[RMDB]
Source information:
Structure probing data (2A3 and DMS) for a 177-nucleotide construct. Conditions: 150 mM KOAc, 10 mM MgCl2 and 150 mM bicine (pH 8.5), 24 C. The data come from the RNA Mapping Database (RMDB), library OK2TRN. 2A3 adducts were read by reverse transcription with SuperScript II with manganese.
RNA sequence: GGGAACGACUCGAGUAGAGUCGAAAACAUGCUCAUCUGGCUUCAUCCGCCCAUCUUAUUCGUGAAGCACGUAACCCCGAAGGCUUAGUCGGCGCAUUGCAAUACUACUUUGAAGUGCCGGUCAGCAACCGGCACAGGGUUUCGACCCUGUGCCGGUAAAAGAAACAACAACAACAAC
Reactivity to 2A3 in 0.01 (KOAc 150mM, MgCl2 10mM, bicine 150mM(pH8.5), 24C), signal-to-noise 2, nucleotides 027 to 126: c020a030u060g010c010u020c070a190u040c080u050g070g000c000u060u000c010a080u060c020c050g000c020c020c020a120u050c060u120u220a160u110u050c010g000u050g100a130a020g030c030a000c050g020u010a010a080c000c010c010c010g040a110a040g130g000c000u040u070a040g070u090c010g020g000c010g000c010a090u040u260g050c000a020a040u030a180c120u040a040c080u130u080u090g040a100a000g000u010g040c000c000g000g000u050c010a000g000c020a020
Reactivity to DMS in 0.01 (KOAc 150mM, MgCl2 10mM, bicine 150mM(pH8.5), 24C), signal-to-noise 3, nucleotides 027 to 126: c070a060u000g000c020u010c040a020u000c130u020g000g010c010u000u000c100a050u000c160c130g000c020c020c150a080u010c100u030u000a110u000u000c100g020u000g020a090a080g030c050a050c050g020u010a110a120c070c000c010c040g010a100a060g020g000c060u000u010a100g000u000c030g020g010c040g030c020a060u000u000g000c050a030a030u010a040c300u020a170c200u000u000u000g020a050a080g010u000g010c010c020g000g000u010c110a070g010c060a120